[RMDB]
RNA sequence: GGGAACGACUCGAGUAGAGUCGAAAAAUGCGCAUUACGAUUAAUCGGCCGGCAUGCCGCGGCUACGCGAUCGUAAUAUUAAUAUAUUAGCGCAUUAGCGCCGGCAUGCGCUAAUCGCGCGCGUAGCGCGAAGUGGAGGUUUCGACCUCCACUUCGCAAAAGAAACAACAACAACAAC
Reactivity to 2A3 in 0.01 (KOAc 150mM, MgCl2 10mM, bicine 150mM(pH8.5), 24C), signal-to-noise 2, nucleotides 027 to 126: a020u120g000c070g000c020a000u010u010a010c020g030a010u000u140a140a130u210c030g090g000c030c000g070g000c010a030u050g060c040c040g040c020g000g010c050u110a130c070g010c010g060a010u020c020g000u010a050a000u030a030u060u180a140a100u160a020u080a050u170u200a030g010c010g000c030a000u000u000a000g010c000g000c020c010g070g040c010a020u050g000c010g000c000u020a000a010u000c120g000c010g000c000g000c060g100u170a040g170c060
Reactivity to DMS in 0.01 (KOAc 150mM, MgCl2 10mM, bicine 150mM(pH8.5), 24C), signal-to-noise 2, nucleotides 027 to 126: a050u000g020c070g020c070a080u000u000a030c010g010a030u000u000a050a140u020c110g030g030c020c030g020g010c060a090u000g020c090c060g020c060g010g000c010u000a040c130g050c280g010a020u000c030g040u000a000a010u000a140u020u010a080a130u010a110u010a140u010u000a100g000c000g020c000a020u000u000a040g000c020g010c160c060g000g010c200a060u010g000c010g020c020u000a000a010u010c130g020c030g020c020g070c060g040u000a070g020c170